Overview: This 177-nucleotide RNA was probed chemically with 2A3. 2A3 adducts were read by reverse transcription with SuperScript II with manganese.

RNA sequence: GGGAACGACUCGAGUAGAGUCGAAAAGCUAGCAAGUGGUGCCGAUGCGCGCUAAGGCACCACAGCCACCGAUGACCUGUAAGGUGGCAAACAGGUCUGCUAAGAAAAGCGCGCACGCGAAAGCGGACGCGGCCUCGUGAUUCGUCACGAGGCCGCGAAAAGAAACAACAACAACAAC
Reactivity to 2A3 in 0.01 (KOAc 150mM, MgCl2 10mM, bicine 150mM(pH8.5), 24C), signal-to-noise 2, nucleotides 027 to 126: g050c000u030a010g010c010a190a040g000u020g010g000u000g000c000c000g000a010u190g000c000g020c000g000c000u000a010a010g000g000c000a000c000c000a000c000a010g000c000c000a000c030c000g110a110u300g170a060c050c080u080g070u020a000a060g030g020u010g010g010c000a000a000a000c040a020g110g000u150c130u050g080c020u140a120a090g180a050a080a010a000g000c010g010c000g030c100a000c000g040c000g030a200a030a010g000c000g010g020a000